Structure probing data (2A3 and DMS) for a 207-nucleotide construct. For 2A3, 2,877 sequencing reads were counted. 2A3 adducts were read by reverse transcription with SuperScript II with manganese. Reactivities are given for positions 27 through 156. The RNA was probed in 150 mM KOAc, 10 mM MgCl2 and 150 mM bicine (pH 8.5) at 24 C.

RNA sequence: GGGAACGACUCGAGUAGAGUCGAAAAUAAGGCAGAGUCUAGCUUAUAAUCAUAGGCAUUUGGUUCUGAUUGCAGUUACAUCAUGCUGAUGACAGCUUCCUGGUCCUCACCACAGAUGGAAUUAACUUCAUGGUGAAUAGUCAAGAGAUUUGUGACACCGAUUUAAAUGGUUCGCCAUUUAAAUCGGAAAAGAAACAACAACAACAAC
Reactivity to 2A3 in 0.01 (KOAc 150mM, MgCl2 10mM, bicine 150mM(pH8.5), 24C), signal-to-noise 4, nucleotides 027 to 156: u160a020a010g060g000c020a010g000a020g030u010c030u060a030g030c020u060u050a060u080a140a130u190c100a030u050a060g000g050c030a070u090u060u190g040g000u040u040c030u020g050a140u050u160g040c020a020g030u040u060a050c000a070u100c020a050u130g060c060u070g030a070u070g030a090c020a030g000c020u030u020c010c010u010g020g020u010c000c020u010c020a020c000c010a020c030a050g040a030u070g030g110a110a080u130u100a120a070c020u040u040c050a020u050g020g000u010g030a070a060u090a080g030u040c030a070a020g050a010g020a140u130u160u090g020u030g000a020c000a020
Reactivity to DMS in 0.01 (KOAc 150mM, MgCl2 10mM, bicine 150mM(pH8.5), 24C), signal-to-noise 2, nucleotides 027 to 156: u000a080a060g020g050c020a100g010a190g020u010c040u010a080g010c030u000u000a060u010a120a180u030c070a080u000a070g020g020c010a130u010u000u010g080g010u010u010c030u020g000a130u000u000g030c090a060g000u000u000a040c000a060u000c090a070u000g000c060u000g020a130u000g020a130c020a090g010c040u000u000c000c000u000g040g010u000c040c080u000c020a020c000c030a080c030a090g000a070u000g020g000a140a090u040u000a040a070c070u000u000c050a060u000g020g080u000g020a040a030u000a050g020u000c020a030a090g020a100g030a150u000u000u000g010u000g000a160c070a240